The data come from the RNA Mapping Database (RMDB), libraries RFM100 and RFMREP.
This 177-nucleotide RNA was probed chemically with 2A3 and DMS.
DMS adducts were read by reverse transcription with MarathonRT.
The RNA was probed in 150 mM KOAc, 10 mM MgCl2 and 150 mM bicine (pH 8.5) at 24 C.

RNA sequence: GGGAACGACUCGAGUAGAGUCGAAAACAGUCCUUCCGGCGUAAUAAUUUGCGGUUCAUCUUCGGCAUUCACCCGCAGGGUACAGAGCGUUAAUGCCAGCAGUAAGGCAACAGGCGCGACAUUUCUCGCGAUUCCUAAAUUUCGAUUUAGGAAUCGCAAAAGAAACAACAACAACAAC
Reactivity to 2A3 in 0.01 (KOAc 150mM, MgCl2 10mM, bicine 150mM(pH8.5), 24C), signal-to-noise 6, nucleotides 027 to 126: c030a040g090u050c000c000u050u010c020c010g050g000c020g080u060a050a050u110a100a110u170u080u100g050c050g020g000u050u050c040a080u030c060u090u050c020g010g000c020a070u040u050c020a060c020c010c000g030c040a040g020g010g000u040a050c040a030g060a020g030c030g020u030u040a090a050u090g000c020c000a010g010c000a020g060u230a230a050g040g000c010a050a040c010a090g010g000c000g000c010g070a010c020a080u060u070u000c040u000c010
Reactivity to DMS in 0.01 (KOAc 150mM, MgCl2 10mM, bicine 150mM(pH8.5), 24C), signal-to-noise 3, nucleotides 027 to 126: c150a110g000u020c020c020u010u000c020c010g030g000c060g000u020a060a050u030a030a110u010u010u000g010c080g020g000u000u000c120a080u000c040u030u010c010g000g000c050a110u000u020c090a030c070c000c020g020c110a040g020g000g010u020a080c120a120g000a160g010c020g030u010u030a050a110u000g000c010c020a080g000c130a150g010u010a050a110g010g000c010a050a030c110a180g000g020c010g000c000g010a070c120a070u000u000u010c010u020c110